Source information:
This 177-nucleotide RNA was probed chemically with DMS and 2A3. For DMS, 937 sequencing reads were counted. Conditions: 150 mM KOAc, 10 mM MgCl2 and 150 mM bicine (pH 8.5), 24 C. Source: RMDB library RFMREP, as collected in RNAgym. DMS adducts were read by reverse transcription with MarathonRT. For 2A3, 3,419 sequencing reads were counted.
RNA sequence: GGGAACGACUCGAGUAGAGUCGAAAACUUGGGCUCAGGUAUGUCUGCGGUGAGGCUGGUACAACUCGGCAGGUUUCACUGUAGAUCUACCUGCGCUCACGAAAACAGGCGCCGUUCGCGGCGCCUGGAGGAAAUGUAUGUUCGCAUACAUUUCCUCAAAAGAAACAACAACAACAAC
Reactivity to DMS in 0.01 (KOAc 150mM, MgCl2 10mM, bicine 150mM(pH8.5), 24C), signal-to-noise 1, nucleotides 027 to 126: c020u000u000g010g020g000c000u010c020a010g040g000u010a020u000g000u000c040u010g000c000g010g010u000g000a020g020g010c000u000g020g010u000a100c110a120a170c200u000c160g000g020c120a300g000g010u000u000u000c050a050c020u000g040u010a030g000a010u000c160u000a010c010c030u000g020c120g020c000u000c010a010c110g010a110a030a070a300c000a000g000g020c000g030c010c020g030u000u020c200g030c010g020g050c010g000c000c000u000g000
Reactivity to 2A3 in 0.01 (KOAc 150mM, MgCl2 10mM, bicine 150mM(pH8.5), 24C), signal-to-noise 2, nucleotides 027 to 126: c000u020u050g000g000g000c010u000c010a000g030g000u020a010u060g010u030c010u000g000c010g000g000u010g010a000g000g010c040u050g090g010u220a210c060a160a150c220u060c120g090g000c090a020g030g000u010u040u020c000a000c000u000g020u020a000g000a000u010c000u000a000c000c000u000g010c010g000c000u000c010a010c020g050a060a150a010a010c020a010g000g010c010g020c020c040g030u080u120c210g010c000g100g000c000g000c010c010u010g010